[RMDB]
RNA sequence: GGGAACGACUCGAGUAGAGUCGAAAAGAUAUGGAAAGUCCACUUGUCUUUGAUCUCGGAAACGAGGGAGACAAAGUGGAGCUUUCCUAAGUCAAAACCGAUUAUCCGGUUCGCCGGAUAAUCGGAAGAAUCAACUAUCGUUCGCGAUAGUUGAUUCAAAAGAAACAACAACAACAAC
Reactivity to DMS in 0.01 (KOAc 150mM, MgCl2 10mM, bicine 150mM(pH8.5), 24C), signal-to-noise 2, nucleotides 027 to 126: g000a040u000a300u000g010g000a010a000a020g020u000c000c000a000c000u000u000g000u000c000u000u000u010g020a060u010c020u010c000g000g000a120a090a190c020g010a010g000g000g010a000g010a020c000a000a010a040g010u000g000g010a020g000c000u010u000u000c000c000u010a020a100g000u000c020a080a070a130a170c020c000g010a000u000u000a020u000c000c000g010g000u010u010c260g020c020c000g000g000a010u000a000a000u000c010g010g000a010a020
Reactivity to 2A3 in 0.01 (KOAc 150mM, MgCl2 10mM, bicine 150mM(pH8.5), 24C), signal-to-noise 2, nucleotides 027 to 126: g010a020u070a010u120g010g020a020a000a010g010u010c000c000a010c010u010u000g010u000c000u170u300u120g140a170u050c010u000c000g030g030a100a040a050c020g000a000g020g000g000a000g020a000c060a080a140a000g000u010g010g010a000g020c000u000u000u000c000c000u020a130a040g050u010c030a010a000a100a210c000c010g000a000u010u000a010u000c000c000g000g040u050u090c300g060c070c000g000g000a010u010a010a010u000c000g020g020a000a010
This 177-nucleotide RNA was probed chemically with DMS and 2A3. The RNA was probed in 150 mM KOAc, 10 mM MgCl2 and 150 mM bicine (pH 8.5) at 24 C. It was measured as part of the RMDB library TTRDEL. 2A3 adducts were read by reverse transcription with SuperScript II with manganese. For DMS, 2,477 sequencing reads were counted. Reactivities are given for positions 27 through 126.